[RMDB]
RNA sequence: GGGAACGACUCGAGUAGAGUCGAAAAGAGAGUCUACGCCUGUAUGUGGGACUGGCAGAGGCAGGUGAUAACACGUUGCGUGUACGACACCAUGACGUACACGUUCACCGUGAGGACGACGCUGCUCAGCUAAAUCAACGUUCGCGUUGAUUUAGCUAAAAGAAACAACAACAACAAC
Reactivity to 2A3 in 0.01 (KOAc 150mM, MgCl2 10mM, bicine 150mM(pH8.5), 24C), signal-to-noise 2, nucleotides 027 to 126: g060a010g010a020g010u000c030u040a060c050g010c020c010u050g070u070a130u130g130u140g060g040g130a110c090u080g030g000c030a030g000a060g130g000c010a000g040g050u030g040a100u090a210a040c030a000c020g000u020u050g010c000g010u000g000u010a010c000g020a030c020a040c070c130a110u250g050a020c010g010u010a000c000a000c000g000u020u060c030a040c030c030g000u020g000a040g060g020a010c050g010a000c030g030c090u050g020c000u000c050
Reactivity to DMS in 0.01 (KOAc 150mM, MgCl2 10mM, bicine 150mM(pH8.5), 24C), signal-to-noise 5, nucleotides 027 to 126: g000a130g010a110g020u000c010u000a140c130g000c040c020u010g000u010a060u000g010u000g000g010g000a080c080u000g000g000c060a060g000a110g020g020c030a020g010g020u000g010a130u000a100a170c030a020c030g010u000u000g010c020g030u000g000u000a010c000g010a100c050a150c250c160a160u020g000a090c000g000u010a010c000a000c000g000u010u010c050a050c150c030g000u020g010a130g000g020a120c120g000a090c080g010c020u010g000c030u000c100
Structure probing data (2A3 and DMS) for a 177-nucleotide construct. The DMS profile rests on 4,909 reads. 2A3 adducts were read by reverse transcription with SuperScript II with manganese. Source: RMDB library OK2TST, as collected in RNAgym. The RNA was probed in 150 mM KOAc, 10 mM MgCl2 and 150 mM bicine (pH 8.5) at 24 C.